[RMDB]
RNA sequence: GGGAACGACUCGAGUAGAGUCGAAAAUUGUGGUCAAGACCUUCGCGUAGUAUCCAAGGUUGUCAAGGUUCCUAUUGACUUAACAAUGAUUGAGUUUAUGUUAUGGUGUAAGGAUGGACAGGGGAAACUAUGGUCAUAGGUUCGCCUAUGACCAUAGAAAAGAAACAACAACAACAAC
Reactivity to 2A3 in 0.01 (KOAc 150mM, MgCl2 10mM, bicine 150mM(pH8.5), 24C), signal-to-noise 3, nucleotides 027 to 126: u030u030g040u040g050g030u050c020a000a060g030a090c030c000u060u030c040g000c030g070u110a050g050u060a120u040c060c010a050a050g070g000u040u030g050u100c030a110a020g080g000u060u050c000c000u050a100u040u060g020a000c000u040u050a060a000c030a100a170u170g050a200u080u130g060a080g140u030u040u090a100u090g110u060u060a080u130g040g010u050g020u060a050a020g030g040a060u020g010g010a030c040a040g010g000g000g050a000a020a000
Reactivity to DMS in 0.01 (KOAc 150mM, MgCl2 10mM, bicine 150mM(pH8.5), 24C), signal-to-noise 6, nucleotides 027 to 126: u000u000g020u000g000g020u000c040a080a080g000a070c030c020u000u000c130g010c070g010u010a080g020u010a090u000c050c050a050a060g010g010u000u010g010u000c080a050a060g010g010u000u000c040c060u000a100u010u000g010a040c020u000u000a060a040c030a050a080u000g010a120u000u000g010a100g000u000u000u000a050u010g020u000u000a050u010g000g010u000g000u000a050a060g010g010a080u010g000g010a050c060a080g010g000g010g000a120a070a130